[RMDB]
RNA sequence: GGGAACGACUCGAGUAGAGUCGAAAAGACAGGAGAUGGUCAGAAGAUCUGCAGGAAAGGUCAGCUCUGUGAUUGCGGCCGAGCUCGGCAUCACAGCAGAGGAAGCCAAACUAGUCUCGGAAAUCGCCUAAUCAAUUCGCUUCGGCGAAUUGAUUAGAAAAGAAACAACAACAACAAC
Reactivity to DMS in 0.01 (KOAc 150mM, MgCl2 10mM, bicine 150mM(pH8.5), 24C), signal-to-noise 2, nucleotides 027 to 126: g010a090c050a080g000g010a060g010a110u010g000g000u000c030a050g010a130a120g000a040u000c020u000g000c110a060g010g010a060a060a060g000g000u000c050a100g000c020u000c020u000g020u000g000a120u000u010g020c080g010g010c000c020g000a120g010c120u000c070g000g010c000a070u000c030a060c050a030g000c120a020g010a020g000g010a180a150g020c030c040a030a060a130c100u000a100g010u010c010u000c050g000g000a090a090a090u010c120g030c130